Structure probing data (DMS) for a 177-nucleotide construct. Source: RMDB library 15KREP, as collected in RNAgym. Conditions: 150 mM KOAc, 10 mM MgCl2 and 150 mM bicine (pH 8.5), 24 C.

[RMDB]
RNA sequence: GGGAACGACUCGAGUAGAGUCGAAAAGAGGGGGCCGAGUGAGGCUUAUCCCGGGGAUCGGCGUCGCCCCCACAUAGCAGACCCCGGGUCCCCUUCCGAACGAGGGGGACGGUCCUUGGACCUCAGGCUCUCUUGAUAACUUCGGUUAUCAAGAGAGAAAAGAAACAACAACAACAAC
Reactivity to DMS in 0.01 (KOAc 150mM, MgCl2 10mM, bicine 150mM(pH8.5), 24C), signal-to-noise 1, nucleotides 027 to 126: g000a150g000g010g000g020g020c050c060g010a080g000u010g000a050g010g040c060u000u010a050u020c060c000c000g010g030g010g000a110u000c030g020g000c000g000u000c100g000c040c000c020c000c010a060c110a100u020a120g000c020a130g010a050c020c000c010c000g000g000g020u010c010c000c000c000u000u000c000c080g030a130a260c160g000a040g000g040g000g000g020a000c090g000g000u000c020c010u010u000g000g000a050c000c010u000c060a050g000g000